[RMDB]
RNA sequence: GGGAACGACUCGAGUAGAGUCGAAAAAAUGCUGGAGAUCGUGAAGAAAUUACAGAACCAGCUGUAUGUGCUUUGCGGCACCUCACAUCUCGUCACGUGGAAUCUGAAAUGGCACAGAAUGGUGUGACUCUAAGUCCGGAUUCGUCCGGACUUAGAGAAAAGAAACAACAACAACAAC
Reactivity to 2A3 in 0.01 (KOAc 150mM, MgCl2 10mM, bicine 150mM(pH8.5), 24C), signal-to-noise 1, nucleotides 027 to 126: a000a000u100g000c030u040g010g010a040g010a090u040c050g000u010g040a070a080g000a060a290a070u190u050a000c000a010g010a080a070c040c010a040g150c000u010g000u000a010u030g000u010g010c020u030u070u180g080c110g030g010c010a010c000c000u000c030a070c000a040u010c000u050c040g110u060c000a020c040g060u050g010g070a020a060u000c000u020g020a120a120a080u120g110g060c090a030c020a060g130a120a000u120g140g010u010g030u050g060a000
Reactivity to DMS in 0.01 (KOAc 150mM, MgCl2 10mM, bicine 150mM(pH8.5), 24C), signal-to-noise 2, nucleotides 027 to 126: a050a040u010g030c040u000g000g010a050g000a060u000c160g020u010g000a040a100g010a110a070a100u000u000a030c010a160g010a070a160c070c160a090g000c010u000g000u000a030u000g000u000g020c020u000u000u020g010c250g010g000c000a030c010c070u010c030a030c050a040u000c020u000c030g000u000c040a040c080g030u000g000g010a060a070u010c060u000g010a080a070a080u020g010g020c030a070c060a070g000a060a060u010g020g000u010g010u010g010a150